Notes
Conditions: 150 mM KOAc, 10 mM MgCl2 and 150 mM bicine (pH 8.5), 24 C. Chemical mapping of a 207-nucleotide RNA with 2A3 and DMS. Values cover nucleotides 27 to 156. 2A3 adducts were read by reverse transcription with SuperScript II with manganese. Source: RMDB library OK3TST, as collected in RNAgym. DMS adducts were read by reverse transcription with MarathonRT.

[RMDB]
RNA sequence: GGGAACGACUCGAGUAGAGUCGAAAAGUAAGACAGUCCUAAGAAUCUAGGGAGGGAAUGUGGCCCAAGGCCCCUGCUGGUCUUUUGCCCACUCAGAAAGCCACUACACUGAGUGUCCAGGAGGUAGGGGGACAGUUCCCACUCUGUGCCUCUCUGGUGUAACAAUUUUUUUCGAAAAAUUGUUACAAAAAGAAACAACAACAACAAC
Reactivity to 2A3 in 0.01 (KOAc 150mM, MgCl2 10mM, bicine 150mM(pH8.5), 24C), signal-to-noise 2, nucleotides 027 to 156: g060u070a030a050g040a060c020a000g100u100c000c030u060a140a040g080a140a140u110c040u110a030g030g010g000a020g050g030g020a060a070u090g020u040g040g000c010c020c040a050a050g100g000c000c010c000c000u020g010c030u040g010g120u030c010u040u090u050u070g020c030c000c010a000c020u000c000a030g070a080a120a080g050c060c040a060c030u050a040c050a010c060u000g000a020g030u010g010u020c010c010a020g030g000a010g020g000u010a020g010g030g010g000g030a000c020a020g020u010u030c000c000c020a010c000u050c040u040g180u060g070c000c000u040c000u000c010u000g010g080
Reactivity to DMS in 0.01 (KOAc 150mM, MgCl2 10mM, bicine 150mM(pH8.5), 24C), signal-to-noise 1, nucleotides 027 to 156: g010u000a040a130g010a080c050a100g000u020c050c030u010a060a130g030a160a090u010c110u000a050g000g010g000a030g000g030g020a070a050u010g010u000g030g010c010c030c040a090a130g020g000c000c000c010c060u010g030c060u010g050g000u020c030u020u000u000u000g020c060c030c040a040c000u000c020a020g000a140a070a120g020c060c050a150c070u010a110c100a280c040u000g010a080g020u000g020u000c000c020a050g030g000a060g000g000u000a300g010g010g000g030g010a000c020a070g010u000u000c000c000c010a100c030u020c010u000g010u000g000c000c020u000c000u010c010u000g000g000